RNA sequence: GGGAACGACUCGAGUAGAGUCGAAAACCGGAUCGGCAAAGGCGAGAACCGAUUGUUCGGCAGGCACGCCGCUUGCGAUGCUAUUCAGGCGGAUUACCUCGCGCAGUGUUGCGAUGGUGAUGACCACACUAGGCCCGCAUUUCGAUGCGGGCCUAGUAAAAGAAACAACAACAACAAC
Reactivity to 2A3 in 0.01 (KOAc 150mM, MgCl2 10mM, bicine 150mM(pH8.5), 24C), signal-to-noise 1, nucleotides 027 to 126: c000c050g000g190a000u000c010g080g110c080a020a020a020g010g000c000g000a030g060a040a000c080c000g100a000u000u250g170u240u000c030g010g060c010a030g100g000c140a000c020g000c000c000g100c010u000u000g000c000g130a110u080g010c030u020a170u140u050c010a020g030g000c020g120g000a020u030u030a020c000c000u020c000g020c000g120c120a130g070u140g000u300u240g030c020g030a070u190g000g020u010g000a000u030g170a120c000c000a000c020